An RNA of 177 nucleotides, treated with 2A3 and DMS and read out base by base.
It was measured as part of the RMDB libraries RFM100 and RFMREP.
For DMS the reverse transcriptase was MarathonRT.
Conditions: 150 mM KOAc, 10 mM MgCl2 and 150 mM bicine (pH 8.5), 24 C.
For 2A3 the reverse transcriptase was SuperScript II with manganese.

RNA sequence: GGGAACGACUCGAGUAGAGUCGAAAACGCUAAGCUCCUGAGAAACGCCAGGUAAACGUUUGCCUACACACACCCUAAUCGCAACAUCAGGGUUGCGGCACGCCGGAAAAACGACACGGAACGUCAGUAGUUUGAUUGGUUUCGACCAAUCAAACUAAAAAGAAACAACAACAACAAC
Reactivity to 2A3 in 0.01 (KOAc 150mM, MgCl2 10mM, bicine 150mM(pH8.5), 24C), signal-to-noise 5, nucleotides 027 to 126: c040g020c060u050a040a040g010c020u040c020c010u030g020a030g060a100a130a010c030g020c040c010a020g020g040u090a080a030a020c030g020u030u040u070g030c020c020u110a040c050a000c000a000c000a020c050c010c000u040a060a070u100c020g020c040a010a040c010a070u160c090a030g010g130g000u030u040g000c000g010g000c010a020c030g040c010c000g040g030a020a030a020a010a000c030g020a000c010a010c060g090g020a080a010c030g040u020c000a060g060
Reactivity to DMS in 0.01 (KOAc 150mM, MgCl2 10mM, bicine 150mM(pH8.5), 24C), signal-to-noise 4, nucleotides 027 to 126: c060g020c040u010a090a150g010c060u000c020c000u020g000a120g010a110a100a090c130g000c060c060a040g010g040u010a100a120a100c080g000u000u010u010g010c000c000u000a090c110a090c120a080c090a050c040c020c030u020a100a110u010c040g010c080a040a060c090a060u020c150a110g010g020g020u000u000g010c010g000g000c080a040c090g010c040c000g000g000a040a040a050a080a100c160g020a060c030a060c050g040g000a070a080c110g000u020c050a120g010